[RMDB]
Background:
Structure probing data (DMS and 2A3) for a 177-nucleotide construct. Values cover nucleotides 27 to 126. The reactions ran in a buffer of 150 mM KOAc, 10 mM MgCl2 and 150 mM bicine (pH 8.5), at 24 C. Source: RMDB libraries RFM100 and RFMREP, as collected in RNAgym. Values are in units of 0.01, from 0 to 300, in steps of 10.
RNA sequence: GGGAACGACUCGAGUAGAGUCGAAAAACGCAGGGAGUCCGGUGCACGGGGUAAGCCUGUGUACCAUAAGGGAGACAACCCAGCGCCGGGUUAAGGUCCCAAAGUGUGGAUUAAGUGCGAUCGAAGGUUCACUACGAAGUUUCGACUUCGUAGUGAAAAAAGAAACAACAACAACAAC
Reactivity to DMS in 0.01 (KOAc 150mM, MgCl2 10mM, bicine 150mM(pH8.5), 24C), signal-to-noise 4, nucleotides 027 to 126: a130c040g010c010a050g020g000g010a200g000u000c010c020g010g010u000g010c000a010c000g000g000g000g020u060a140a180g020c000c000u000g010u000g010u000a000c000c000a070u020a080a180g010g010g010a080g010a090c040a050a030c020c010c010a130g000c130g010c070c060g000g000g000u010u010a120a100g000g000u000c000c000c000a090a100a070g010u030g010u030g000g000a030u000u000a060a230g010u000g000c010g010a120u000c030g010a120a090g020g020
Reactivity to 2A3 in 0.01 (KOAc 150mM, MgCl2 10mM, bicine 150mM(pH8.5), 24C), signal-to-noise 5, nucleotides 027 to 126: a000c020g000c000a000g010g020g050a030g010u010c020c040g000g030u030g010c000a000c030g020g010g020g070u280a130a040g300c000c000u000g000u000g010u000a000c010c000a020u110a070a080g030g040g020a040g020a050c070a070a010c060c000c000a040g040c030g020c070c090g000g020g010u030u080a070a040g080g010u000c000c020c000a030a080a030g120u160g080u140g010g000a020u030u020a060a010g100u040g040c030g010a020u070c070g040a130a020g090g020